[RMDB]
RNA sequence: GGGAACGACUCGAGUAGAGUCGAAAACACUGUCCACAGAAACUAGUUGGCCAGAGGGGUCUAUGAUGGGAAUUGCACAGGUUCGAGGACGCGAGAAAUGAGAAGCCAUUUGCAAUAACAAAAACGAGGAUUUUCUGGGAGACAGAAAUCAAUCCUCCAUUACUUAACUCUUCGGAGUUAAGUAAUGAAAAGAAACAACAACAACAAC
Reactivity to 2A3 in 0.01 (KOAc 150mM, MgCl2 10mM, bicine 150mM(pH8.5), 24C), signal-to-noise 3, nucleotides 027 to 156: c050a000c010u060g050u050c020c010a050c020a080g080a030a160a020c050u080a050g060u050u060g000g020c030c010a020g030a050g050g030g010g040u040c050u070a080u110g080a060u060g040g020g030a050a080u100u090g000c020a040c020a050g020g050u050u050c040g010a040g040g020a030c050g000c030g050a010g090a070a100a040u150g010a060g030a120a020g030c020c040a050u070u050u120g030c040a030a080u140a180a100c060a090a070a110a020a020c040g030a020g000g000a010u060u000u000u000c010u010g000g010g010a130g090a040c000a010g020a030a000a010u110c020a020a030u010c000c000u000c010
Reactivity to DMS in 0.01 (KOAc 150mM, MgCl2 10mM, bicine 150mM(pH8.5), 24C), signal-to-noise 2, nucleotides 027 to 156: c080a070c040u000g030u000c000c000a050c050a100g020a140a150a150c040u010a100g020u000u000g000g040c040c030a090g000a150g010g010g000g000u020c060u000a040u010g010a140u010g010g030g030a090a110u010u000g040c020a050c010a060g010g020u000u000c050g030a090g000g020a060c110g080c030g000a110g000a060a040a090u000g000a220g000a060a100g000c010c030a130u000u000u020g000c060a050a080u000a030a160c040a090a130a090a090a080c130g020a060g050g010a060u000u000u000u010c020u000g000g010g010a250g040a220c010a040g000a020a020a050u000c110a080a110u010c000c000u010c020